[RMDB]
RNA sequence: GGGAACGACUCGAGUAGAGUCGAAAAAGAUCCACGCUACGGCGUGGAUCACACGUUCAUCCCUAUUGGGACGGAAGUAGGCAUAGUGCCGAAGGAAAGCAUUAGUCAUGCGCUACGGCGCAUGACACACAUCAGAGUCACUUCGGUGACUCUGAAACCAUACUGUUGUGUUCGCACAACAGUAUGGAAAAGAAACAACAACAACAAC
Reactivity to 2A3 in 0.01 (KOAc 150mM, MgCl2 10mM, bicine 150mM(pH8.5), 24C), signal-to-noise 5, nucleotides 027 to 156: a010g000a000u000c000c000a000c000g010c000u030a050c250g120g000c020g000u000g010g010a000u000c000a000c000a010c010g020u030u030c030a090u100c000c000c010u040a170u070u210g010g000g010a010c020g050g040a070a030g040u070a050g020g000c040a080u120a200g110u150g140c000c000g000a020a000g070g080a100a040a010g040c100a100u090u170a030g000u010c000a000u000g000c020g000c000u020a040c280g070g000c000g000c000a000u010g010a000c000a000c000a000c000a090u030c000a000g000a000g000u010c000a010c010u040u070c180g080g000u000g000a000c000u000c000u000g000a000a000a000
Reactivity to DMS in 0.01 (KOAc 150mM, MgCl2 10mM, bicine 150mM(pH8.5), 24C), signal-to-noise 2, nucleotides 027 to 156: a060g030a010u010c000c010a020c000g040c000u000a100c220g140g020c000g040u000g010g010a010u000c000a030c060a050c050g000u000u000c020a080u000c010c000c010u000a230u020u020g010g000g010a040c000g010g010a040a070g000u000a060g020g010c050a150u000a070g010u020g010c000c010g020a120a160g000g000a140a140a110g020c080a060u000u010a070g010u000c020a010u000g010c000g060c000u000a140c300g100g030c030g020c010a000u000g000a010c000a010c060a070c080a140u010c000a010g020a040g000u000c000a010c010u010u000c290g060g010u000g000a010c000u000c000u000g000a000a050a040